[RMDB]
RNA sequence: GGGAACGACUCGAGUAGAGUCGAAAAGAACCCGAUGGAGUUCCCAACCUUCCCCUUACGGACAAAAGCUGGUCCCGAUAGGGGCACCCACAAUAGGAUGGCAAAAGGGGACUCGGGUCCGUCGUUCGAUGCUAUGUAUGUUCGCAUACAUAGCAUCAAAAGAAACAACAACAACAAC
Reactivity to 2A3 in 0.01 (KOAc 150mM, MgCl2 10mM, bicine 150mM(pH8.5), 24C), signal-to-noise 1, nucleotides 027 to 126: g020a040a050c030c000c000g020a090u210g110g110a050g020u070u010c000c000c000a000a090c010c030u050u040c000c010c000c000u000u010a010c020g040g000a010c010a000a180a020a000g050c030u060g020g020u040c000c000c000g040a020u090a090g020g000g000g030c000a020c000c000c000a050c050a130a090u100a230g050g070a060u030g050g000c040a020a020a060a130g070g000g000g010a030c030u010c060g000g000g030u000c030c060g020u010c020g020u040u080c090
Reactivity to DMS in 0.01 (KOAc 150mM, MgCl2 10mM, bicine 150mM(pH8.5), 24C), signal-to-noise 2, nucleotides 027 to 126: g020a100a080c010c000c010g020a080u040g080g030a210g000u000u000c000c000c020a180a150c050c050u010u010c000c010c000c020u000u000a300c300g000g000a040c010a060a090a110a120g020c220u020g000g020u000c000c000c000g010a210u000a050g010g010g020g020c080a000c080c000c010a080c170a070a090u000a190g000g000a020u000g010g020c250a020a040a050a060g020g000g010g000a050c050u000c010g000g010g000u000c010c090g040u000c030g000u000u000c020

Conditions: 150 mM KOAc, 10 mM MgCl2 and 150 mM bicine (pH 8.5), 24 C. An RNA of 177 nucleotides, treated with 2A3 and DMS and read out base by base. For DMS, 853 sequencing reads were counted. It was measured as part of the RMDB library 15KREP.